[RMDB]
RNA sequence: GGGAACGACUCGAGUAGAGUCGAAAAGCGGCCGGGCGGAGGUACGCCGACGCCCGGAGGUCUGAGCGCCGCCGCGCUGCAGCAGGGCUAUGGCGGCCUGCAACAGGCGCAGCUGCAGCAGGCCGGCUAUCAUUUAACGCUUCGGCGUUAAAUGAUAAAAAGAAACAACAACAACAAC
Reactivity to 2A3 in 0.01 (KOAc 150mM, MgCl2 10mM, bicine 150mM(pH8.5), 24C), signal-to-noise 1, nucleotides 027 to 126: g050c040g070g050c010c000g000g020g000c010g010g030a040g030g030u010a040c170g030c070c050g000a020c000g000c090c040c080g000g000a000g020g030u030c040u070g090a060g140c070g000c020c020g050c000c010g030c020g000c030u000g000c000a030g000c010a010g020g140g020c090u160a140u200g210g140c100g040g170c060c020u050g090c030a120a060c030a140g040g040c020g000c070a030g040c000u030g020c010a000g010c010a000g010g050c120c060g000g000c020
Reactivity to DMS in 0.01 (KOAc 150mM, MgCl2 10mM, bicine 150mM(pH8.5), 24C), signal-to-noise 2, nucleotides 027 to 126: g020c030g000g010c020c010g000g020g010c000g000g010a300g020g010u000a060c160g020c000c010g020a300c020g010c000c010c010g000g010a010g000g000u000c060u020g020a090g020c130g010c010c010g040c000c020g010c170g020c010u000g000c000a040g010c020a100g010g000g000c030u000a090u000g010g030c070g000g000c070c030u000g010c110a080a150c120a080g000g010c020g020c050a100g000c000u000g000c010a030g010c010a240g000g000c100c040g020g010c020
Chemical mapping of a 177-nucleotide RNA with 2A3 and DMS. The data come from the RNA Mapping Database (RMDB), library OK2TST. 2A3 adducts were read by reverse transcription with SuperScript II with manganese. The reactions ran in a buffer of 150 mM KOAc, 10 mM MgCl2 and 150 mM bicine (pH 8.5), at 24 C. For DMS, 1,945 sequencing reads were counted. Reactivities are given for positions 27 through 126. For DMS the reverse transcriptase was MarathonRT.